[RMDB]
RNA sequence: GGGAACGACUCGAGUAGAGUCGAAAAUCAGGCCGAACGCUUCCGGGUUCCCGUUUUCGUGGCGGAUGAUUCCUUCCACCAGACCGCGCAUGGUGUCGUAGUCGUGGAGGUUCAGCGUUUCGCUAUUCGGGUCAACGGCCAGAACGGCGGCAACCUGUAACAGCGAAGCUUUCGAGCUUCGCUGUUAAAAAGAAACAACAACAACAAC
Reactivity to 2A3 in 0.01 (KOAc 150mM, MgCl2 10mM, bicine 150mM(pH8.5), 24C), signal-to-noise 1, nucleotides 027 to 156: u040c000a020g050g000c000c030g050a130a050c050g050c070u100u030c030c060g000g000g000u090u160c000c000c000g000u000u000u050u090c030g000u000g030g010c000g020g040a230u040g050a050u290u290c010c000u160u170c000c010a050c020c010a120g010a000c000c010g000c010g050c090a080u270g190g100u110g110u280c010g000u070a000g000u080c080g000u000g000g000a000g000g010u000u020c000a010g000c000g000u050u110u110c000g020c000u070a000u000u000c000g000g000g040u080c070a040a010c000g030g000c020c000a000g020a010a000c000g010g000c020g000g000c010a000a040c000c000u060g050